[RMDB]
RNA sequence: GGGAACGACUCGAGUAGAGUCGAAAAGAUAUGGACGCACAUCGAUCGUGAACUACUGCGAAGUGUCGGAAACGACAUGUAGCAGCACGGGAGUGCGUCCUAAGUCAAAGCGCUGUUCGCAGCGCAAGCAAGGUUGGCUGUUCGCAGCCAACCUUGCAAAAGAAACAACAACAACAAC
Reactivity to 2A3 in 0.01 (KOAc 150mM, MgCl2 10mM, bicine 150mM(pH8.5), 24C), signal-to-noise 1, nucleotides 027 to 126: g120a060u110a100u120g030g010a000c000g170c010a010c000a300u130c070g210a080u100c000g090u010g010a050a090c110u300a020c000u300g000c030g110a170a020g020u000g010u000c030g010g030a070a080a030c000g050a020c010a050u300g040u120a010g040c010a000g020c000a000c010g010g000g070a050g000u000g000c000g000u000c000c000u000a000a000g000u000c020a000a210a030g000c000g000c050u030g030u160u120c230g020c190a000g000c000g130c000a020a000
The data come from the RNA Mapping Database (RMDB), library TTRDES. Chemical mapping of a 177-nucleotide RNA with 2A3. Conditions: 150 mM KOAc, 10 mM MgCl2 and 150 mM bicine (pH 8.5), 24 C. For 2A3 the reverse transcriptase was SuperScript II with manganese. For 2A3, 1,053 sequencing reads were counted.